[RMDB]
RNA sequence: GGGAACGACUCGAGUAGAGUCGAAAAGAAAUGUGCACAUGUAGCACUAAUACAUGUAAAAAUGGUCAAGUCUGGACCUAAGAGACUUAAAAAUGGCGCAUAGCACGCCUAAUGCUAUGAAAAGAAAGGGAUACUUAUUCUUCGGAAUAAGUAUCCCAAAAGAAACAACAACAACAAC
Reactivity to 2A3 in 0.01 (KOAc 150mM, MgCl2 10mM, bicine 150mM(pH8.5), 24C), signal-to-noise 4, nucleotides 027 to 126: g160a000a170a040u300g020u060g010c040a010c020a100u030g040u060a000g000c040a010c170u090a020a000u030a020c010a000u010g020u170a100a090a010a070a060u240g000g000u080c050a030a030g020u000c040u160g150g040a050c000c000u010a050a040g110a000g050a050c000u070u250a000a030a020a120a200u300g010g000c010g020c070a000u010a010g000c010a000c080g040c040c100u070a090a040u010g000c000u000a010u080g010a090a000a000a050g240a070a040a020
Reactivity to DMS in 0.01 (KOAc 150mM, MgCl2 10mM, bicine 150mM(pH8.5), 24C), signal-to-noise 2, nucleotides 027 to 126: g000a110a080a050u040g050u000g010c020a090c070a010u000g060u000a020g010c090a070c270u070a070a090u010a000c000a000u010g010u000a060a020a010a110a060u010g000g000u030c030a050a050g000u000c040u000g030g010a040c060c050u000a010a080g000a080g000a050c020u000u000a090a040a030a090a100u040g000g000c000g100c030a040u000a000g010c000a000c080g040c070c010u020a040a120u000g010c000u000a020u000g040a080a080a010a010g010a100a060a070

About this RNA:
Chemical mapping of a 177-nucleotide RNA with 2A3 and DMS. Reactivities are given for positions 27 through 126. The 2A3 profile rests on 4,842 reads. 2A3 adducts were read by reverse transcription with SuperScript II with manganese. It was measured as part of the RMDB library OK1LIB. DMS adducts were read by reverse transcription with MarathonRT.